RNA sequence: GGGAACGACUCGAGUAGAGUCGAAAACUGGGCCGAGCGCUUCGAUCCUGGCAGCCGGGCGGUGGCUGGCCAACGAAUUGUGUUCGCACCAGGCGCGGUCAAGAUGUGCGCGACGGCACUGCGAAUAAUGCCGAUAGCGAUUCGUCGCUAUCGGCAUAAAAGAAACAACAACAACAAC
Reactivity to 2A3 in 0.01 (KOAc 150mM, MgCl2 10mM, bicine 150mM(pH8.5), 24C), signal-to-noise 1, nucleotides 027 to 126: c010u040g000g000g000c000c100g060a000g000c000g030c000u300u260c000g060a090u060c000c000u000g000g000c000a000g120c050c000g130g090g000c000g080g000u080g070g000c030u030g060g060c100c000a070a130c070g070a050a040u160u270g050u110g000u160u160c020g000c000a070c130c000a000g000g000c130g050c000g000g130u200c090a010a000g070a060u070g000u050g000c000g010c120g090a090c000g060g050c020a040c090u000g000c000g030a100a030u160a180
The record gives the reactivity of an RNA of 177 nucleotides to 2A3. The data come from the RNA Mapping Database (RMDB), library OK1LIB. The reactions ran in a buffer of 150 mM KOAc, 10 mM MgCl2 and 150 mM bicine (pH 8.5), at 24 C. For 2A3, 452 sequencing reads were counted. For 2A3 the reverse transcriptase was SuperScript II with manganese.